[RMDB]
The data come from the RNA Mapping Database (RMDB), libraries RFM100 and RFMREP. Chemical mapping of a 177-nucleotide RNA with DMS and 2A3. 2A3 adducts were read by reverse transcription with SuperScript II with manganese. As a SHAPE reagent, 2A3 marks flexible, mostly unpaired nucleotides at the ribose 2'-OH.
RNA sequence: GGGAACGACUCGAGUAGAGUCGAAAAAUGACGACUAGAAAGUCAGCGGGUGGAAGCAUCUGUGCGUGGGUUAGGUAGCCUCAUAUACAUGAACGACUGAUGUAGAGUUCGAUUGGGGAGAUAAGUAAUUCGAAGAUUCAUUCGUGAAUCUUCGAAUAAAAGAAACAACAACAACAAC
Reactivity to DMS in 0.01 (KOAc 150mM, MgCl2 10mM, bicine 150mM(pH8.5), 24C), signal-to-noise 7, nucleotides 027 to 126: a080u020g020a070c070g010a090c080u020a100g000a110a100a110g000u000c020a060g020c070g000g000g030u030g010g000a120a070g010c060a060u020c070u020g020u030g010c060g010u010g000g010g000u010u020a040g000g000u010a070g000c030c030u000c060a030u020a090u020a080c110a120u020g010a040a060c070g000a110c070u010g010a100u030g000u030a060g010a220g010u010u000c040g010a110u010u000g000g010g000g000a080g010a070u020a040a080g000u020a060
Reactivity to 2A3 in 0.01 (KOAc 150mM, MgCl2 10mM, bicine 150mM(pH8.5), 24C), signal-to-noise 5, nucleotides 027 to 126: a000u090g020a010c030g010a020c030u080a050g120a150a130a020g060u040c010a010g060c020g030g000g010u110g040g040a110a030g020c020a060u030c040u140g080u060g040c010g030u040g040g020g000u070u050a040g010g040u020a030g030c010c020u030c010a030u110a010u060a120c090a060u170g030a050a000c040g130a030c060u100g060a060u100g100u140a030g040a010g090u030u050c030g040a100u030u060g030g000g020g000a050g000a040u080a070a050g140u060a050